[RMDB]
Background: The record gives the reactivity of an RNA of 177 nucleotides to DMS.
RNA sequence: GGGAACGACUCGAGUAGAGUCGAAAAACGAGAAGGUCGCGACCGGCGCGGACGCGAAGUUCGGGAUUCCCUACGAGCGCGUCCCCGAGGUCGCCGACCGCGUCCGCGAGGAGUUCGACCUGGUCGGUCACCACGACGUGUUCGCACGUCGUGGUGAAAAAGAAACAACAACAACAAC
Reactivity to DMS in 0.01 (KOAc 150mM, MgCl2 10mM, bicine 150mM(pH8.5), 24C), signal-to-noise 1, nucleotides 027 to 126: a080c050g000a070g000a150a160g000g010u010c000g040c140g000a030c000c000g030g010c050g030c300g020g000a000c030g020c000g000a070a140g000u010u010c080g010g020g010a150u020u000c040c080c000u010a050c100g020a080g010c030g010c010g010u000c010c000c060c000g000a220g000g000u000c040g010c040c040g000a000c000c020g000c060g010u000c010c000g010c040g000a100g000g030a140g010u010u000c080g010a050c010c000u000g010g000u000c050g000g000

It was measured as part of the RMDB library OK2TST. The reactions ran in a buffer of 150 mM KOAc, 10 mM MgCl2 and 150 mM bicine (pH 8.5), at 24 C.